[RMDB]
RNA sequence: GGGAACGACUCGAGUAGAGUCGAAAACUUAGGAAGGGUGGACACUGAGAUAACAUAUGCUUCAAGCCCCUGACACCUUCCUCCUCCAUUCUCACCCCCAGACUCAACGGUGCUCUGCGCCAGGAGCAGAACACUACCGUUUCGACGGUAGUGUUCUAAAAGAAACAACAACAACAAC
Reactivity to DMS in 0.01 (KOAc 150mM, MgCl2 10mM, bicine 150mM(pH8.5), 24C), signal-to-noise 1, nucleotides 027 to 126: c160u010u010a000g000g010a020a010g020g000g000u000g040g010a050c060a110c060u000g010a050g000a030u000a070a070c150a150u000a090u010g050c020u000u000c150a100a170g000c050c010c010c220u040g000a110c150a090c050c100u000u000c000c000u000c010c010u000c010c030a140u010u000c010u030c030a300c030c060c060c050c050a090g030a140c070u030c070a040a150c020g000g020u000g030c120u010c090u000g000c120g010c100c080a150g020g030a060g000c130
Chemical mapping of a 177-nucleotide RNA with DMS. Values cover nucleotides 27 to 126. Conditions: 150 mM KOAc, 10 mM MgCl2 and 150 mM bicine (pH 8.5), 24 C.